[RMDB]
RNA sequence: GGGAACGACUCGAGUAGAGUCGAAAAGAUAUGGAGCGUGAACUACCUCCGCCCUCGCACUCGGAAACGAGUGAACUACGAGUAACAAGAGGCACGCUCCUAAGUCAAAAGGUAGCUUCGGCUACCACGAUCUAGCAAUCUUCGGAUUGCUAGAUCGAAAAGAAACAACAACAACAAC
Reactivity to DMS in 0.01 (KOAc 150mM, MgCl2 10mM, bicine 150mM(pH8.5), 24C), signal-to-noise 2, nucleotides 027 to 126: g000a040u000a300u040g000g000a020g000c020g010u020g050a150a090c270u000a300c000c010u040c030c070g010c300c270c010u000c060g020c000a010c000u000c000g000g000a110a040a240c000g000a040g000u010g000a000a050c160u020a300c090g060a020g070u020a080a050c300a180a030g000a000g050g000c000a020c000g000c000u000c000c000u000a000a050g000u020c020a010a070a100a250g000g000u000a020g000c000u000u000c270g010g000c000u000a000c000c000a000
Reactivity to 2A3 in 0.01 (KOAc 150mM, MgCl2 10mM, bicine 150mM(pH8.5), 24C), signal-to-noise 2, nucleotides 027 to 126: g020a020u050a020u070g010g010a000g050c030g020u020g090a220a160c120u120a140c200c010u060c040c110g220c060c000c010u020c030g000c020a000c010u020c010g030g000a040a080a080c020g000a010g000u000g000a080a030c070u170a060c020g040a000g080u150a300a240c250a300a160g000a000g000g030c010a000c000g010c030u020c000c000u000a020a000g010u000c000a000a000a050a240g000g000u000a000g000c020u060u060c300g060g000c000u010a010c010c000a020